This 177-nucleotide RNA was probed chemically with 2A3 and DMS. Values are in units of 0.01, from 0 to 300, in steps of 10. 2A3 adducts were read by reverse transcription with SuperScript II with manganese.

[RMDB]
RNA sequence: GGGAACGACUCGAGUAGAGUCGAAAAGCAGCGCAGUAUACGGAGAACACGCCGCUGAUGCUGGUUGUCUGGUCCCCGGAAGAGAUCCAGGCACUGGCUGACGGUAUGGAAAUUUCUCUGACCGGUCCACUCUGUAGGAGUUCGCUCCUACAGAGUGAAAAGAAACAACAACAACAAC
Reactivity to 2A3 in 0.01 (KOAc 150mM, MgCl2 10mM, bicine 150mM(pH8.5), 24C), signal-to-noise 4, nucleotides 027 to 126: g060c040a010g040c020g000c070a020g030u130a060u030a200c030g020g000a020g000a050a010c020a010c070g010c000c020g040c090u080g030a080u130g000c000u020g030g010u240u110g010u010c010u000g000g000u020c020c030c010c020g130g060a130a040g030a020g000a020u050c010c010a010g010g000c000a000c010u010g010g010c000u030g020a030c000g010g010u050a050u120g060g030a060a110a100u040u070u020c020u000c010u010g050a070c020c030g050g040u030c020
Reactivity to DMS in 0.01 (KOAc 150mM, MgCl2 10mM, bicine 150mM(pH8.5), 24C), signal-to-noise 3, nucleotides 027 to 126: g020c050a050g000c040g000c070a070g010u000a110u010a170c110g000g010a070g000a080a120c130a110c060g010c000c000g020c020u010g010a080u010g030c000u000g000g020u000u000g020u000c000u000g000g010u010c030c010c010c040g030g030a220a170g010a040g000a040u010c010c000a010g000g010c020a010c010u000g000g020c010u000g000a070c040g000g000u000a050u000g000g000a060a120a160u000u000u000c000u000c030u000g000a150c110c040g010g010u000c090